[RMDB]
RNA sequence: GGGAACGACUCGAGUAGAGUCGAAAAAUCCUUCACCGUGAUUCAGGCCGAGAGGGAGUCCACUCUCGUAAAUCCAGGCUCAACCAAAAGUAACUGCGAACAACAUCGUUCCUUUCGCUCGUAAGGCUGCUCCUGUAGCUGCUUAAACGCCACAAACCUCAGAUUACGAGUUCGCUCGUAAUCUGAGAAAAGAAACAACAACAACAAC
Reactivity to 2A3 in 0.01 (KOAc 150mM, MgCl2 10mM, bicine 150mM(pH8.5), 24C), signal-to-noise 2, nucleotides 027 to 156: a000u020c010c000u080u180c070a070c040c040g100u040g040a170u080u220c110a030g100g000c020c020g010a010g000a020g010g050g010a010g010u010c050c020a060c030u000c000u000c010g080u120a040a040a010u000c050c010a000g010g000c000u010c020a010a050c030c050a000a170a030a020g090u130a070a110c080u090g000c030g030a020a000c050a020a070c030a250u090c060g000u000u000c000c000u030u090u060c050g000c050u060c100g070u070a000a050g060g000c030u020g000c000u030c030c030u110g030u180a030g000c020u010g000c000u030u020a080a230a040c050g040c080c040a090c010a040a040a040c030
Chemical mapping of a 207-nucleotide RNA with 2A3. 2A3 adducts were read by reverse transcription with SuperScript II with manganese. For 2A3, 928 sequencing reads were counted.